[RMDB]
RNA sequence: GGGAACGACUCGAGUAGAGUCGAAAAGGGAACCUGCCGCGUCGGCAAUAAAGGUAAGCGUUGCGUUCGAAUAUGGGACAAGAAUUAAGCCAACAUGAACUUUAUGUAGAACAGUUAAAAAAGGCUCAAUAAUAAGGUCCUUCGGGACCUUAUUAUUAAAAGAAACAACAACAACAAC
Reactivity to 2A3 in 0.01 (KOAc 150mM, MgCl2 10mM, bicine 150mM(pH8.5), 24C), signal-to-noise 3, nucleotides 027 to 126: g010g030g000a020a090c000c010u020g040c050c000g040c030g040u050c000g060g000c010a030a040u110a030a070a020g040g010u070a040a020g020c000g030u030u020g000c020g050u010u030c120g030a040a020u170a140u220g030g000g000a010c030a010a030g110a090a040u090u040a100a000g020c000c030a020a000c030a080u030g040a020a020c020u110u050u080a060u250g060u040a020g030a050a070c020a110g060u090u130a010a180a010a010a000a000g010g000c040u060c040
Reactivity to DMS in 0.01 (KOAc 150mM, MgCl2 10mM, bicine 150mM(pH8.5), 24C), signal-to-noise 6, nucleotides 027 to 126: g000g010g020a120a120c040c030u010g010c030c030g020c100g010u010c030g000g030c030a080a060u030a060a120a060g000g010u010a050a110g010c090g010u000u010g010c040g000u010u020c040g010a080a100u030a080u020g010g020g000a100c080a050a080g010a050a070u010u020a060a050g010c020c010a050a050c070a060u010g010a090a080c050u000u000u010a040u040g020u030a080g010a080a070c090a040g010u010u020a000a030a080a080a080a100g010g000c020u000c130
Background: This 177-nucleotide RNA was probed chemically with 2A3 and DMS. 2A3 adducts were read by reverse transcription with SuperScript II with manganese. The data come from the RNA Mapping Database (RMDB), libraries RFM100 and RFMREP.